[RMDB]
RNA sequence: GGGAACGACUCGAGUAGAGUCGAAAAGGAGGAGUUCUACAUAGAUCCUGUCCCUAUCCCGACCACGAAAGUGGUUAUCGUGCCUGACAGGAUCUAGGCUGGAUAGGGAGGUCCUCCGGAACUCAGAACCGACGUUCAAGUUCGCUUGGACGUCGGUAAAAGAAACAACAACAACAAC
Reactivity to DMS in 0.01 (KOAc 150mM, MgCl2 10mM, bicine 150mM(pH8.5), 24C), signal-to-noise 3, nucleotides 027 to 126: g020g020a040g000g010a050g000u000u000c010u000a150c090a110u000a050g000a020u010c000c020u000g010u000c000c160c110u000a070u000c020c030c120g010a020c000c000a000c000g010a140a090a200g000u000g000g000u000u000a050u010c100g010u000g000c150c060u000g000a020c020a080g010g000a100u000c010u000a010g000g030c130u010g010g010a080u000a080g000g000g010a070g000g000u000c010c020u000c020c010g000g020a040a050c030u000c040a110g010a160
Reactivity to 2A3 in 0.01 (KOAc 150mM, MgCl2 10mM, bicine 150mM(pH8.5), 24C), signal-to-noise 2, nucleotides 027 to 126: g030g000a000g010g010a060g270u050u000c040u030a100c020a120u110a020g010a020u010c010c000u000g070u010c030c000c000u020a050u060c000c040c010g000a020c020c000a000c000g070a150a020a020g000u000g010g010u000u040a060u090c010g020u070g020c000c040u020g000a020c010a060g050g000a000u000c000u010a010g030g000c070u090g040g040a120u070a110g060g010g030a020g020g110u030c000c000u010c000c000g000g010a040a010c010u020c030a010g060a040
Record summary
The record gives the reactivity of an RNA of 177 nucleotides to DMS and 2A3. The RNA was probed in 150 mM KOAc, 10 mM MgCl2 and 150 mM bicine (pH 8.5) at 24 C. It was measured as part of the RMDB library OK2TRN.